[RMDB]
RNA sequence: GGGAACGACUCGAGUAGAGUCGAAAAACAAUCUGGUUCGCCAGAUUGUCAAUGUCUUCCUAAAAUCCUUGGAAGACUGUAUAUUUAGAAUAAAGGUCGAAAGUACCUGUGCUUUCGAGCACAGGAAAGGACGAUACUCUUUCGAGAGUAUCGUCCUAAAAGAAACAACAACAACAAC
Reactivity to 2A3 in 0.01 (KOAc 150mM, MgCl2 10mM, bicine 150mM(pH8.5), 24C), signal-to-noise 1, nucleotides 027 to 126: a000c020a000a000u010c010u010g000g080u030u020c110g050c020c000a010g010a000u000u000g000u010c030a000a040u100g010u000c000u030u010c010c010u010a000a010a010a080u040c000c000u030u020g000g000a000a000g000a000c000u000g040u000a300u010a050u090u200u160a030g040a150a090u190a300a200a000g030g000u020c030g020a100a110a000g040u070a050c000c020u010g000u040g000c040u080u050u100c270g060a000g000c010a000c000a000g000g000a090a070
Structure probing data (2A3) for a 177-nucleotide construct.